[RMDB]
RNA sequence: GGGAACGACUCGAGUAGAGUCGAAAAAUCUUGGCGAAGUCAGCGCGGAAGGAGCGCGCAACUCCUUACCCUCGCCUUUUUUUUUCCGCUCCCGUUCGCGAAAGCGUUCAGCGGAAAAGCGACCAAAUUGUCUUUAUCACUUCGGUGAUAAAGACAAAAAAGAAACAACAACAACAAC
Reactivity to DMS in 0.01 (KOAc 150mM, MgCl2 10mM, bicine 150mM(pH8.5), 24C), signal-to-noise 1, nucleotides 027 to 126: a010u000c070u010u000g010g000c000g000a050a110g000u000c120a140g040c180g020c190g010g010a080a010g000g000a050g020c010g000c210g000c180a100a130c010u000c000c010u000u000a130c090c000c030u000c000g040c010c000u000u000u000u000u000u010u000u020u000c010c000g000c010u000c060c050c020g020u010u000c010g050c000g000a170a090a160g030c000g010u000u020c020a040g000c020g000g000a020a000a010a050g010c060g000a100c040c100a060a020a120